[RMDB]
RNA sequence: GGGAACGACUCGAGUAGAGUCGAAAAGUCGGCUGUAUCAUGACCGGGAUUUUUGCCGCCAGCUCGCUGGGCGGCGUGGGCUUCGCUGAAGGUGUGACGAUGGGCCAUCAGUUGCUGGUACAGCUGGGUGACGAGGACUAUUCGUAGUCCUCGUCACAAAAGAAACAACAACAACAAC
Reactivity to 2A3 in 0.01 (KOAc 150mM, MgCl2 10mM, bicine 150mM(pH8.5), 24C), signal-to-noise 1, nucleotides 027 to 126: g180u060c010g030g000c000u000g020u000a020u030c020a030u080g020a060c030c030g070g060g020a040u100u120u100u190u300g000c000c000g020c000c000a020g000c050u110c100g070c040u030g110g090g060c000g020g030c000g000u030g010g020g000c120u140u120c070g000c010u100g040a050a090g060g020u160g040u080g090a030c060g090a150u160g100g000g000c040c000a030u010c000a020g070u130u190g050c050u010g010g000u020a010c000a030g000c000u010g000g080
Reactivity to DMS in 0.01 (KOAc 150mM, MgCl2 10mM, bicine 150mM(pH8.5), 24C), signal-to-noise 1, nucleotides 027 to 126: g000u000c010g010g030c000u000g010u000a020u000c020a030u000g000a090c050c060g000g000g010a110u010u000u000u000u010g020c000c010g000c010c000a070g010c090u030c300g000c030u010g020g040g040c000g000g030c000g010u010g000g000g000c040u000u000c070g010c050u000g000a080a120g020g000u000g030u030g000a080c070g000a110u000g000g010g000c030c050a070u000c020a070g000u000u000g000c130u010g000g000u000a010c010a010g020c010u000g040g020